[RMDB]
RNA sequence: GGGAACGACUCGAGUAGAGUCGAAAAGAUUCUAUAUAUGGACUAGUGCUAAUUAUCUGCGUAGCGUUGCCUUGAGAAACUACUUGGAUUAUGGAGGAUGUCUUGUUUGAAGGAGACACGUGGAGGCCACCUCCCCUGUCUUCGGACAGGGGAGGUGAAAAGAAACAACAACAACAAC
Reactivity to 2A3 in 0.01 (KOAc 150mM, MgCl2 10mM, bicine 150mM(pH8.5), 24C), signal-to-noise 2, nucleotides 027 to 126: g000a130u010u000c030u040a130u000a090u000a070u200g060g000a090c060u040a040g040u080g180c010u060a120a130u090u110a170u030c060u120g080c040g100u000a010g000c050g070u080u060g020c030c090u080u060g060a130g000a090a010a010c000u100a000c000u000u120g000g100a020u000u080a040u300g130g000a100g030g000a000u010g000u000c000u090u050g110u190u070u040g120a170a160g050g000a010g030a010c000a020c100g070u000g040g000a040g000g000c000
Reactivity to DMS in 0.01 (KOAc 150mM, MgCl2 10mM, bicine 150mM(pH8.5), 24C), signal-to-noise 1, nucleotides 027 to 126: g000a080u000u000c040u000a030u040a030u020a090u000g020g000a010c000u050a140g010u080g000c080u030a100a090u030u070a000u030c070u000g000c140g040u020a080g070c060g000u000u020g000c010c000u050u000g000a130g040a060a060a120c020u000a070c050u000u000g030g000a010u020u000a070u030g000g000a170g000g020a090u000g000u000c000u020u010g030u000u000u020g040a160a080g000g000a040g010a080c090a030c090g000u000g000g000a040g000g000c040

Conditions: 150 mM KOAc, 10 mM MgCl2 and 150 mM bicine (pH 8.5), 24 C. The record gives the reactivity of an RNA of 177 nucleotides to 2A3 and DMS. It was measured as part of the RMDB library OK1LIB.